[RMDB]
RNA sequence: GGGAACGACUCGAGUAGAGUCGAAAAGACUCAGGAAUCUGUCCUUCAAGUUUGUUUCCAGAGAAAUCAAUGGUGCUGUAGAAACUCGGGAAACGCGAGAGGACCUCGAUCAGGAGGAGAGAGAUGGCCGAAGAAUCUGUUUGAACGGAGAGUCAAAGGGCAAAAUAUGAUUCGUCAUAUUUUGCCCAAAAGAAACAACAACAACAAC
Reactivity to DMS in 0.01 (KOAc 150mM, MgCl2 10mM, bicine 150mM(pH8.5), 24C), signal-to-noise 1, nucleotides 027 to 156: g010a030c020u000c000a080g030g020a140a080u000c030u000g030u000c000c000u000u000c010a050a230g020u000u020u040g040u010u000u030c000c030a140g000a050g010a070a130a170u000c050a110a200u000g000g030u000g000c010u000g070u000a090g000a100a070a130c040u010c030g010g020g020a020a020a040c020g010c080g000a200g030a030g040g020a100c050c050u000c050g020a140u020c070a070g080g040a110g000g000a140g030a060g000a090g010a140u010g010g010c070c050g050a060a100g010a050a110u010c020u020g010u000u020u000g030a050a140c060g000g050a090g000a090g000u000c020a060a120a150
Reactivity to 2A3 in 0.01 (KOAc 150mM, MgCl2 10mM, bicine 150mM(pH8.5), 24C), signal-to-noise 2, nucleotides 027 to 156: g010a010c000u000c010a030g070g070a070a080u010c090u110g030u090c000c020u140u070c050a050a050g020u100u230u260g020u000u060u070c010c060a040g010a000g020a050a090a050u090c040a050a050u130g100g010u110g080c050u130g030u090a030g110a130a170a060c040u010c000g010g000g020a020a020a010c040g000c030g030a060g000a000g020g010a000c010c000u080c060g050a070u050c050a010g040g010a010g030g020a010g000a010g000a000g000a090u040g060g000c020c020g060a030a010g000a020a070u000c050u070g050u050u130u100g040a040a010c050g030g040a050g010a010g090u060c000a040a040a050
Source: RMDB library OK3TST, as collected in RNAgym. The record gives the reactivity of an RNA of 207 nucleotides to DMS and 2A3. The RNA was probed in 150 mM KOAc, 10 mM MgCl2 and 150 mM bicine (pH 8.5) at 24 C. Values are in units of 0.01, from 0 to 300, in steps of 10.